[RMDB]
RNA sequence: GGGAACGACUCGAGUAGAGUCGAAAAGAUAUGGAGCGUGCAGUCAUCGAUCGAGGUAAAUAUCGGAAACGAUAUUUAAAUAUGGGAGACUGCCCGCUCCUAAGUCAAACUCGCCUUCGGGCGAGAACCGCGUAAAUAACUUCGGUUAUUUACGCGGAAAAGAAACAACAACAACAAC
Reactivity to 2A3 in 0.01 (KOAc 150mM, MgCl2 10mM, bicine 150mM(pH8.5), 24C), signal-to-noise 1, nucleotides 027 to 126: g000a000u020a050u030g010g000a010g000c000g020u020g000c000a000g040u020c000a120u140c170g270a190u190c080g120a060g080g050u030a020a020a000u000a060u000c020g000g040a000a010a000c010g000a000u000a000u000u000u000a020a040a030u300a140u300g170g100g110a170g010a020c000u000g010c030c000c010g010c000u000c010c000u000a000a000g000u000c010a000a030a010c010u030c010g020c020c010u030u030c300g090g030g020c020g000a010g010a000a050
This 177-nucleotide RNA was probed chemically with 2A3. The data come from the RNA Mapping Database (RMDB), library TTRDEL. As a SHAPE reagent, 2A3 marks flexible, mostly unpaired nucleotides at the ribose 2'-OH. The RNA was probed in 150 mM KOAc, 10 mM MgCl2 and 150 mM bicine (pH 8.5) at 24 C.